Chemical mapping of a 177-nucleotide RNA with DMS and 2A3. The reactions ran in a buffer of 150 mM KOAc, 10 mM MgCl2 and 150 mM bicine (pH 8.5), at 24 C. It was measured as part of the RMDB library M2PK50.
RNA sequence: GGGAACGACUCGAGUAGAGUCGAAAAUCCUCUAUCUUCGGAUAGAGGAAAAGAGCUAGCAGGUACCGCUAGCAAAGAAAAGGUACGAAGACGGAAACGUCAAAACGAAGGGGUUCGCCCCUUCGAACUAAGGGAAAUUGUUCGCAAUUUCCCUUAGAAAAGAAACAACAACAACAAC
Reactivity to DMS in 0.01 (KOAc 150mM, MgCl2 10mM, bicine 150mM(pH8.5), 24C), signal-to-noise 4, nucleotides 027 to 126: u000c000c000u000c000u000a000u000c000u000u010c180g020g000a010u000a000g010a020g000g010a010a010a050a100g010a300g000c000u000a000g000c000a080g010g010u000a020c010c000g000c000u000a010g010c030a040a090a120g000a030a020a030a110g000g010u000a000c010g020a190a120g000a020c000g010g000a070a090a150c010g030u000c000a040a050a060a130c010g010a000a000g020g010g020g000u010u010c270g010c000c010c000c000u000u000c000g000a050a150
Reactivity to 2A3 in 0.01 (KOAc 150mM, MgCl2 10mM, bicine 150mM(pH8.5), 24C), signal-to-noise 2, nucleotides 027 to 126: u010c010c000u000c000u000a010u000c000u020u040c090g070g010a000u010a010g000a020g010g000a040a030a000a010g050a020g010c000u000a000g000c050a050g000g110u010a010c000c000g000c000u000a000g010c050a020a010a000g010a000a030a000a010g010g000u000a010c020g030a140a050g000a010c010g010g010a050a050a020c000g000u000c010a000a020a020a060c030g000a000a000g020g020g010g010u060u100c180g140c000c000c000c000u000u010c000g000a020a010